Chemical mapping of a 177-nucleotide RNA with 2A3 and DMS.
2A3 adducts were read by reverse transcription with SuperScript II with manganese.
For DMS, 775 sequencing reads were counted.
Values cover nucleotides 27 to 126.
The reactions ran in a buffer of 150 mM KOAc, 10 mM MgCl2 and 150 mM bicine (pH 8.5), at 24 C.

RNA sequence: GGGAACGACUCGAGUAGAGUCGAAAACUCGAUGAAGCAGAAGAUGUUACUGAAUCUGUGCAAGAAGAAGCACAACCAGUAGAAGUACCUGUUGAAGAUAUUGCGCAGGUUGUCAUAGCUGACACCUACAUCAACAGUUCUUCGGAACUGUUGAUGUAAAAGAAACAACAACAACAAC
Reactivity to 2A3 in 0.01 (KOAc 150mM, MgCl2 10mM, bicine 150mM(pH8.5), 24C), signal-to-noise 2, nucleotides 027 to 126: c010u020c040g050a070u090g090a110a020g070c020a000g010a140a020g030a060u080g060u050u030a020c020u020g050a050a020u000c050u010g030u040g020c000a030a040g130a040a010g070a080a020g150c010a000c020a030a020c030c010a000g000u020a020g010a080a030g060u050a080c030c000u010g030u050u030g000a040a020g040a060u060a130u140u180g000c110g000c070a000g050g000u050u060g030u030c040a070u060a060g000c030u000g030a020c000a000c000c000u010
Reactivity to DMS in 0.01 (KOAc 150mM, MgCl2 10mM, bicine 150mM(pH8.5), 24C), signal-to-noise 1, nucleotides 027 to 126: c080u000c000g010a090u000g040a240a080g020c020a080g000a140a090g000a100u020g000u020u000a050c020u010g000a120a110u000c050u010g020u020g000c000a040a050g010a110a160g020a150a150g010c000a020c000a030a040c060c030a010g020u000a020g010a110a050g010u000a050c050c000u000g000u000u000g000a110a070g010a050u000a050u010u010g000c100g010c090a080g000g010u020u000g030u000c000a060u000a110g010c270u000g000a050c080a040c060c020u010